[RMDB]
RNA sequence: GGGAACGACUCGAGUAGAGUCGAAAAGGGGUCCUCCAUGACGUCCCUGUAGGCUUGGAUUUAUGGAGCUGAAGCCUCCACGGCUCCAUUGUCAGCCUACUGGGACGCAAUGUGGAGGACGGAGGCACCCAAACGCGAGAGGUUCGCCUCUCGCGAACAGAUAGCUGGUCUUCGGACCAGCUAUCUGAAAAGAAACAACAACAACAAC
Reactivity to 2A3 in 0.01 (KOAc 150mM, MgCl2 10mM, bicine 150mM(pH8.5), 24C), signal-to-noise 2, nucleotides 027 to 156: g040g000g060g030u000c000c000u000c000c000a020u100g300a020c010g000u020c010c000c000u000g010u000a010g020g000c070u060u300g130g000a040u140u300u220a010u090g000g000a000g000c000u000g000a100a000g030c000c000u070c000c000a010c000g000g000c000u000c000c010a000u010u010g000u010c050a040g020c000c000u000a000c010u010g000g000g010a000c000g000c000a000a000u050g000u010g000g000a000g010g000a000c000g000g010a020g010g000c020a040c000c000c000a090a070a010c010g000c000g000a010g000a000g020g080u120u190c300g110c010c000u000c000u000c000g000c000g000a010a010